Structure probing data (2A3 and DMS) for a 207-nucleotide construct. The DMS profile rests on 1,815 reads. DMS adducts were read by reverse transcription with MarathonRT. Source: RMDB library M2RFPK, as collected in RNAgym. The reactions ran in a buffer of 150 mM KOAc, 10 mM MgCl2 and 150 mM bicine (pH 8.5), at 24 C.
[RMDB]
RNA sequence: GGGAACGACUCGAGUAGAGUCGAAAACGCAGAGGGUUCUGAUAACAAAGAACCUAGAUAGCCGCAUCGCUAUUAUAGGAUGUAGUCGGUGAGCCGGAAUGCCUGCAUCGUAAGCCUAUAAGUAAAUUUAAGUGUAAUCACUUCGGUGAUUACACAAUCGUUCAAUUGUGUUCGCACAAUUGAACGAAAAAGAAACAACAACAACAAC
Reactivity to 2A3 in 0.01 (KOAc 150mM, MgCl2 10mM, bicine 150mM(pH8.5), 24C), signal-to-noise 3, nucleotides 027 to 156: c050g010c010a050g040a070g070g000g030u000u000c000u040g060a100u070a210a030c040a040a120a030g010a010a020c000c000u010a060g030a070u060a010g010c010c010g100c080a110u050c040g000c060u000a030u140u050a100u130a090g030g000a010u060g050u090a020g060u100c040g000g030u020g010a010g060c040c010g060g000a070a010u070g050c000c030u030g020c020a010u010c060g000u020a000a070g000c000c020u070a070u010a170a060g060u120a060a050a120u140u190u110a160a040g000u000g000u000a000a000u000c000a000c010u030u040c130g070g000u000g000a010u010u000a000c000a000c000a000a010
Reactivity to DMS in 0.01 (KOAc 150mM, MgCl2 10mM, bicine 150mM(pH8.5), 24C), signal-to-noise 1, nucleotides 027 to 156: c020g030c050a090g010a250g000g040g000u000u000c000u000g010a160u010a090a180c300a120a250a090g000a030a030c000c000u020a020g010a120u000a090g000c000c040g000c030a070u000c030g010c030u000a040u000u010a090u000a040g000g000a070u010g030u020a080g050u040c040g020g020u000g010a080g030c000c020g000g090a120a110u020g010c030c000u000g030c040a020u020c020g010u000a120a130g020c020c010u000a050u000a000a050g010u010a000a080a230u000u000u000a080a160g020u010g000u000a020a010u000c000a010c010u010u000c280g050g030u000g000a010u000u010a000c000a000c010a000a010